[RMDB]
The data come from the RNA Mapping Database (RMDB), library OK2TST. This 177-nucleotide RNA was probed chemically with 2A3 and DMS. For 2A3, 1,154 sequencing reads were counted. Reactivities are given for positions 27 through 126. For DMS the reverse transcriptase was MarathonRT.
RNA sequence: GGGAACGACUCGAGUAGAGUCGAAAAGAAGAACAAUGCACAGGAAAGUGCCCAACAGGUCUAAAAAAAGAAGGCUGGUUGUCCUUUAGUAAAGAGCAUACUAGCACUUGGGGCUGUGAAGAGUUCGAAUGGGUCAUAUGUUCGCAUAUGACCCAUUAAAAGAAACAACAACAACAAC
Reactivity to 2A3 in 0.01 (KOAc 150mM, MgCl2 10mM, bicine 150mM(pH8.5), 24C), signal-to-noise 1, nucleotides 027 to 126: g060a100a000g020a000a000c010a000a100u130g030c020a000c000a000g020g160a150a120a020g060u070g030c000c000c010a030a090c030a060g100g060u060c050u240a250a170a050a020a000a000a000g090a070a000g030g020c040u020g060g000u000u000g030u090c020c000u010u070u160a150g070u210a100a080a050g010a010g010c000a020u040a190c000u040a040g000c000a020c120u000u010g040g000g060g000c010u000g010u000g020a030a060g020a000g040u050u030c010g000
Reactivity to DMS in 0.01 (KOAc 150mM, MgCl2 10mM, bicine 150mM(pH8.5), 24C), signal-to-noise 2, nucleotides 027 to 126: g000a130a140g010a020a060c010a070a230u000g020c000a010c000a050g040g010a130a100a120g000u010g010c020c040c020a060a060c110a150g000g020u020c070u010a000a000a060a120a070a060a090g010a080a070g010g010c010u010g000g030u010u000g000u010c020c020u000u010u000a130g000u000a110a060a030g000a040g020c040a030u010a020c020u000a030g010c020a040c030u000u000g010g000g000g020c010u000g000u000g000a020a040g020a300g010u000u000c000g020